[RMDB]
Notes:
Chemical mapping of a 177-nucleotide RNA with DMS and 2A3. For 2A3 the reverse transcriptase was SuperScript II with manganese. For DMS, 10,689 sequencing reads were counted.
RNA sequence: GGGAACGACUCGAGUAGAGUCGAAAAUGGGCUUGCUGAGAUGAUUAAAUGGGUCCAACUACGUAAAGUGCUUCCAACAGUGCCCAGCCCACAGGAGGUGCUCAGUAAACAGGUCUAGGGGUGGCCACGAAUGGAAAUUAUUCGUAAUUUCCAUUCGAAAAGAAACAACAACAACAAC
Reactivity to DMS in 0.01 (KOAc 150mM, MgCl2 10mM, bicine 150mM(pH8.5), 24C), signal-to-noise 7, nucleotides 027 to 126: u000g020g010g010c030u010u000g030c040u000g000a130g010a100u020g010a110u010u010a040a090a100u000g010g010g020u000c050c060a070a110c110u000a060c100g010u010a060a120a080g020u000g000c040u000u000c010c030a070a110c130a060g010u000g000c020c010c020a080g020c020c010c020a080c160a110g010g000a060g020g020u000g000c030u000c060a070g010u000a050a070a090c130a050g000g000u000c020u000a090g000g010g010g010u000g000g000c060c080a170
Reactivity to 2A3 in 0.01 (KOAc 150mM, MgCl2 10mM, bicine 150mM(pH8.5), 24C), signal-to-noise 6, nucleotides 027 to 126: u060g010g010g000c030u060u100g000c020u090g040a070g000a180u180g030a080u160u260a060a140a130u160g060g000g010u040c030c020a050a070c060u140a020c060g110u110a060a100a100g040u040g030c030u040u020c020c020a060a060c020a120g060u030g080c000c020c000a000g010c000c010c000a030c020a030g040g030a030g010g010u030g010c020u010c040a030g030u130a020a050a060c030a040g030g020u020c040u090a050g020g020g000g040u050g010g010c020c020a030